[RMDB]
RNA sequence: GGGAACGACUCGAGUAGAGUCGAAAAAGUUAGGUUCGCUAUGGUGCAACUCUUUAAGGGAAUAACGAACUAAUUCUAAGCAAGUAAUGGAGAAAUGCCAGGGUCACUAUCUAGCCAUAAUAGUGCUGUAAGUGACUUAGAUUCGUCUAAGUCACAAACAGACUGGAGGGUUCGCCCUCCAGUCUGUAAAAGAAACAACAACAACAAC
Reactivity to 2A3 in 0.01 (KOAc 150mM, MgCl2 10mM, bicine 150mM(pH8.5), 24C), signal-to-noise 1, nucleotides 027 to 156: a000g080u070u050a090g040g120u020u000c000g020c000u010a000u070g050g000u050g010c030a170a110c040u070c050u190u220u090a080a060g070g000g000a070a100u110a050a000c000g010a000a070c110u020a000a020u090u040c050u060a110a000g080c010a010a000g020u120a160a050u170g130g010a010g020a040a140a000u060g000c010c010a050g000g000g120u040c000a000c040u000a000u220c060u080a100g020c000c000a000u010a050a040u000a080g050u030g000c070u060g020u160a300a180g040u000g020a000c000u000u000a000g000a000u000u060c160g000u000c170u000a000a000g000u000c000a010c000a000a020